[RMDB]
RNA sequence: GGGAACGACUCGAGUAGAGUCGAAAAGAGAGACAACGCGACGCCGAGAACCGACGUAUCCGUGAAGAGCAGGACCGUCUUCGUGUGCUUUUUGAACGCGAAAAAGCGGAACGCGAGCGAUUGGAAGCUUAGCUACACUCUUCGGAGUGUAGCUAAGAAAAGAAACAACAACAACAAC
Reactivity to DMS in 0.01 (KOAc 150mM, MgCl2 10mM, bicine 150mM(pH8.5), 24C), signal-to-noise 3, nucleotides 027 to 126: g020a110g010a130g020a110c020a050a060c090g020c030g020a120c080g010c010c010g010a140g000a080a150c120c020g010a100c030g010u010a130u000c010c020g000u020g000a090a060g010a040g000c080a110g000g010a140c200c020g040u000c070u000u000c020g000u000g000u000g010c030u020u000u000u010u000g000a080a040c080g000c070g000a040a000a030a090a110g000c020g010g010a120a110c060g000c030g010a080g010c040g000a090u000u000g000g000a100a130g010
Reactivity to 2A3 in 0.01 (KOAc 150mM, MgCl2 10mM, bicine 150mM(pH8.5), 24C), signal-to-noise 2, nucleotides 027 to 126: g050a010g020a000g000a040c020a080a020c050g060c010g100a130c040g020c030c010g060a060g020a100a100c030c030g030a050c010g040u010a130u040c030c010g000u050g060a040a070g030a050g100c070a030g030g040a010c050c000g030u020c000u050u020c010g030u040g020u040g060c000u080u080u020u050u110g090a100a000c050g010c000g130a040a000a000a000a030g000c030g030g020a070a020c030g000c000g000a020g020c030g080a130u000u090g080g000a080a000g040